[RMDB]
RNA sequence: GGGAACGACUCGAGUAGAGUCGAAAAUCGCAGGGAUUCUUACAGUAGGCCUCAUGGUCGCUUUCUUCGGUGGGGUCGGUUACUUCAUCUGGAAGGAUUCCCAUAGCCGCAAAGGCUGAUCCUCCCGAGUCAAAGUCAGGUUCGCCUGACUUUGACUAAAAGAAACAACAACAACAAC
Reactivity to DMS in 0.01 (KOAc 150mM, MgCl2 10mM, bicine 150mM(pH8.5), 24C), signal-to-noise 2, nucleotides 027 to 126: u000c060g010c190a130g000g000g000a040u000u030c010u020u000a030c070a010g030u000a100g000g000c000c000u000c040a050u000g020g020u000c070g060c300u000u000u010c090u000u000c030g000g020u030g060g040g000g000u000c000g060g020u000u030a080c150u060u020c090a090u000c060u000g000g000a040a040g000g000a000u040u010c000c000c050a220u030a000g000c000c050g000c280a040a080a120g010g000c000u000g000a040u000c080c090u000c000c010c070g030
Reactivity to 2A3 in 0.01 (KOAc 150mM, MgCl2 10mM, bicine 150mM(pH8.5), 24C), signal-to-noise 2, nucleotides 027 to 126: u020c010g000c030a080g010g020g000a020u020u000c010u030u100a020c000a050g060u150a060g060g000c000c010u080c030a020u040g110g010u010c010g110c170u050u210u200c050u010u010c010g070g000u040g000g000g000g000u000c020g030g110u200u140a070c070u060u170c080a090u000c000u050g000g000a020a010g020g000a000u100u120c030c000c000a010u140a000g000c000c010g000c100a180a230a090g020g000c030u030g020a020u010c000c020u030c010c020c000g010

Chemical mapping of a 177-nucleotide RNA with DMS and 2A3. For 2A3, 1,083 sequencing reads were counted. For DMS the reverse transcriptase was MarathonRT. The RNA was probed in 150 mM KOAc, 10 mM MgCl2 and 150 mM bicine (pH 8.5) at 24 C.